[RMDB]
Chemical mapping of a 207-nucleotide RNA with DMS and 2A3. Reactivities are given for positions 27 through 156. For 2A3 the reverse transcriptase was SuperScript II with manganese. The RNA was probed in 150 mM KOAc, 10 mM MgCl2 and 150 mM bicine (pH 8.5) at 24 C.
RNA sequence: GGGAACGACUCGAGUAGAGUCGAAAACGGUCCUGCCAUGAGACCGUAACGAGGACAUGUCGCCUCGAAUGGCGUCGGGGAGCCGGCAGCUUACCCCACGGAUGAGCGCCUAAUGCCGGUACCCGGGUAUACGCUACCCCGUUCGCGGGGUAGCGAAGUGAACUAAAAUGUUCGCAUUUUAGUUCACAAAAGAAACAACAACAACAAC
Reactivity to DMS in 0.01 (KOAc 150mM, MgCl2 10mM, bicine 150mM(pH8.5), 24C), signal-to-noise 1, nucleotides 027 to 156: c010g000g020u000c000c000u010g030c040c270a050u000g020a090g010a000c010c020g020u020a050a060c000g000a100g010g030a070c050a160u010g050u020c020g000c000c000u000c010g040a130a090u000g000g080c030g000u000c040g070g000g020g000a300g020c000c040g000g000c000a090g000c030u000u000a010c010c000c060c220a190c020g020g030a080u010g010a020g000c010g010c220c170u030a070a170u010g020c010c010g050g000u000a030c000c000c020g030g000g020u020a060u000a060c060g040c010u000a020c000c000c000c000g000u000u000c180g000c040g000g010g010g000u000a000g020c020g010a010a040
Reactivity to 2A3 in 0.01 (KOAc 150mM, MgCl2 10mM, bicine 150mM(pH8.5), 24C), signal-to-noise 3, nucleotides 027 to 156: c000g000g000u000c000c030u030g020c000c000a050u040g030a030g000a050c000c030g080u030a020a000c000g010a010g000g040a010c060a180u200g040u240c180g000c010c000u010c010g010a010a020u020g000g020c020g110u030c000g000g000g010g000a090g130c000c010g000g000c000a010g010c000u010u010a040c010c010c070c100a050c110g030g030a160u070g010a010g000c010g050c040c050u090a120a050u070g010c000c000g000g010u020a010c000c000c000g000g010g000u230a150u040a050c010g000c000u000a010c010c000c000c000g000u020u060c130g020c020g050g020g000g010u000a000g000c010g000a010a010